Structure probing data (2A3) for a 177-nucleotide construct.
[RMDB]
RNA sequence: GGGAACGACUCGAGUAGAGUCGAAAAGGGGUUAGAUGCGAGUGAGCAUAUUUCAGAUAUACAUCAUGUUGGUUUUCCUGACGAGGAGUAUAUUCCUGUUUCAGGAGAGGAACAUAAGGUUCACUGGCCAGGUAUCGGCAUUCGUGCCGAUACCUGGAAAAGAAACAACAACAACAAC
Reactivity to 2A3 in 0.01 (KOAc 150mM, MgCl2 10mM, bicine 150mM(pH8.5), 24C), signal-to-noise 1, nucleotides 027 to 126: g090g020g020g050u150u100a080g030a020u080g000c000g000a020g050u060g040a000g000c010a010u070a150u160u180u130c040a000g000a000u010a000u040a150c020a110u190c050a000u050g000u000u000g170g210u020u000u050u000c000c000u000g000a020c110g000a010g000g000a000g170u080a040u080a040u300u000c000c000u050g120u160u050u070c000a000g000g070a020g000a060g010g020a000a000c000a000u050a130a070g050g000u030u070c020a010c210u050g040g000
For 2A3, 483 sequencing reads were counted.